[RMDB]
RNA sequence: GGGAACGACUCGAGUAGAGUCGAAAAAGGGAUUUUUCAGGCUUCUCUGCGACUUUUUUCAAACGCACCAAGCAUUUCCUUACGUUCUUUGGGAUGAGACGUGUAAGAUGAAGUUUGGGAGUUGACGCCGUACCCACCAGUUCGCUGGUGGGUACGGAAAAGAAACAACAACAACAAC
Reactivity to 2A3 in 0.01 (KOAc 150mM, MgCl2 10mM, bicine 150mM(pH8.5), 24C), signal-to-noise 2, nucleotides 027 to 126: a000g080g010g000a010u000u000u000u000u120c050a010g010g040c000u010u000c030u000c000u030g030c000g040a180c040u220u090u000u000u090u100c080a070a070a000c060g010c050a050c010c040a020a020g000c020a140u100u100u000c000c000u010u030a010c040g030u080u070c010u000u040u110g120g070g010a000u100g000a020g000a010c060g070u060g050u200a050a030g040a050u160g020a050a000g010u000u020u000g030g000g000a090g000u000u050g030a030c010g030
The record gives the reactivity of an RNA of 177 nucleotides to 2A3. The RNA was probed in 150 mM KOAc, 10 mM MgCl2 and 150 mM bicine (pH 8.5) at 24 C. For 2A3, 848 sequencing reads were counted.